[RMDB]
RNA sequence: GGGAACGACUCGAGUAGAGUCGAAAACUACUGGAAUUUUCGUCCUCGAAGGUUUCAGCAAAUUAUAAAGCCAGAGAGCCAGUCAGAGGGCGCUACCAUGCAAACUAGGGCUGGCUACUCUUGCACAUAAAGACGAUUCUUUCGAGAAUCGUCUUUAAAAAGAAACAACAACAACAAC
Reactivity to 2A3 in 0.01 (KOAc 150mM, MgCl2 10mM, bicine 150mM(pH8.5), 24C), signal-to-noise 2, nucleotides 027 to 126: c020u020a040c030u020g000g010a000a000u050u000u000u000c060g070u220c050c120u160c020g010a000a010g040g040u000u000u000c000a000g000c000a020a000a020u090u100a060u050a140a120a030g000c010c020a000g000a000g010a000g000c010c000a000g000u000c030a030g000a010g120g000g060c040g010c000u230a300c020c020a120u300g000c010a000a000a100c000u010a020g020g000g020c000u020g010g040c000u030a050c000u000c010u000u000g000c000a000c000a060
Reactivity to DMS in 0.01 (KOAc 150mM, MgCl2 10mM, bicine 150mM(pH8.5), 24C), signal-to-noise 3, nucleotides 027 to 126: c010u000a070c010u000g000g000a000a010u000u010u010u000c000g000u030c210c300u080c060g000a000a030g000g000u000u000u000c010a050g000c200a040a090a070u040u030a180u040a180a120a060g000c000c060a000g000a020g000a130g000c000c010a000g010u000c000a020g000a040g000g000g000c300g000c000u000a070c210c270a060u040g000c020a020a300a220c040u010a000g030g000g000c000u030g000g000c000u000a000c000u000c010u000u000g000c000a110c300a070